Background
Chemical mapping of a 177-nucleotide RNA with 2A3 and DMS. DMS adducts were read by reverse transcription with MarathonRT. High DMS reactivity at an A or C suggests that its Watson-Crick edge is free. For 2A3, 6,623 sequencing reads were counted.

[RMDB]
RNA sequence: GGGAACGACUCGAGUAGAGUCGAAAAAGGCUCAUCCUGUCCAUUGGUGGACUCCCUCGCUCCUUCCGCUUUCACUUUAGAGCAUCAGGAUAUGAUGAGAAGAUGGUGCGUGAGAUGGAGGGCCAAAGGGAUUAAGUAACUUCGGUUACUUAAUCCCAAAAGAAACAACAACAACAAC
Reactivity to 2A3 in 0.01 (KOAc 150mM, MgCl2 10mM, bicine 150mM(pH8.5), 24C), signal-to-noise 8, nucleotides 027 to 126: a000g060g000c030u040c080a300u070c080c010u040g010u010c020c020a110u110u290g210g020u140g070g110a040c020u050c000c010c000u020c020g010c010u050c000c040u030u040c040c010g060c020u050u170u160c110a140c130u130u150u120a100g020a040g140c010a010u050c010a000g210g030a170u110a100u300g030a020u010g020a000g020a060a040g030a060u060g020g030u020g000c020g020u070g040a080g010a040u140g030g000a010g000g010g000c000c000a060a020a020
Reactivity to DMS in 0.01 (KOAc 150mM, MgCl2 10mM, bicine 150mM(pH8.5), 24C), signal-to-noise 2, nucleotides 027 to 126: a090g020g000c010u000c030a160u010c000c000u020g000u020c010c010a140u010u020g000g000u040g000g000a100c040u010c030c010c030u000c050g000c060u040c000c000u000u000c010c080g000c070u010u010u070c110a070c090u020u040u010a080g010a150g020c000a000u000c010a000g010g030a100u060a110u000g000a020u000g010a080g010a070a150g000a090u000g000g010u000g000c070g030u010g030a090g000a080u030g000g000a060g000g000g000c110c060a040a100a110